Description: Conditions: 150 mM KOAc, 10 mM MgCl2 and 150 mM bicine (pH 8.5), 24 C. The record gives the reactivity of an RNA of 207 nucleotides to 2A3. As a SHAPE reagent, 2A3 marks flexible, mostly unpaired nucleotides at the ribose 2'-OH. 2A3 adducts were read by reverse transcription with SuperScript II with manganese.

[RMDB]
RNA sequence: GGGAACGACUCGAGUAGAGUCGAAAAGGGGUCGCUUCAUCGAUCGGAUGUGGAGCAUCGAUCGUACUGAAGCCUCCACGGUACGGGAGCUCCCAUCCGGGAGAAGCGACGGAGGCACCCAAACUCCGACAAGGGCGUUUCGACGCCCUUGUCGGAGACACAAGCUUACUUUCGAGUAAGCUUGUGUAAAAGAAACAACAACAACAAC
Reactivity to 2A3 in 0.01 (KOAc 150mM, MgCl2 10mM, bicine 150mM(pH8.5), 24C), signal-to-noise 1, nucleotides 027 to 156: g060g050g050g040u040c000g000c000u000u010c040a200u300c030g010a010u000c000g000g020a030u020g190u300g060g000a010g000c020a020u300c030g000a000u000c010g000u010a000c010u020g070a200a060g030c000c000u000c000c000a000c000g000g010u000a000c000g000g000g000a020g000c000u000c000c000c000a000u030c000c010g000g010g000a020g000a000a000g000c010g000a000c000g000g000a000g000g010c000a030c000c000c000a050a100a080c000u000c000c000g000a000c010a020a010g010g000g050c030g000u000u070u130c160g040a030c000g000c000c040c000u020u000g000u000c000g000g000a000g000